[RMDB]
RNA sequence: GGGAACGACUCGAGUAGAGUCGAAAAGAUUUCUACAACAGGAGGACUUGGCGGAUUUAUCUUCAAUUGAUUGAUUAAUGGAACAGGAACAAAACUUGUAUGUGAAGGUAAUAGUUACCACUGUACCACGACUGUGACAAUUCGUUGUCACAGUCGUAAAAGAAACAACAACAACAAC
Reactivity to 2A3 in 0.01 (KOAc 150mM, MgCl2 10mM, bicine 150mM(pH8.5), 24C), signal-to-noise 2, nucleotides 027 to 126: g040a020u100u100u090c000u040a070c030a060a000c000a050g040g040a010g010g030a050c070u070u050g090g030c060g030g050a070u000u110u000a030u040c000u020u010c070a090a110u100u120g090a090u070u100g060a080u080u300a090a060u190g070g010a130a030c000a040g080g030a050a020c040a030a100a050a020c020u140u110g080u090a140u030g160u010g060a030a010g000g000u000a000a030u020a150g030u010u050a010c020c030a050c020u010g020u040a050c040c020
Reactivity to DMS in 0.01 (KOAc 150mM, MgCl2 10mM, bicine 150mM(pH8.5), 24C), signal-to-noise 2, nucleotides 027 to 126: g000a070u030u000u020c000u000a030c030a040a150c150a010g020g000a060g010g010a060c070u000u000g030g020c030g030g000a090u000u010u000a020u000c030u010u000c050a070a090u000u020g010a100u000u010g000a090u000u010a050a130u020g000g020a040a020c040a020g010g010a080a080c160a050a050a070a060c060u010u010g010u000a110u000g010u000g010a020a040g020g010u000a060a040u000a090g000u000u000a090c050c040a050c080u000g000u000a080c050c040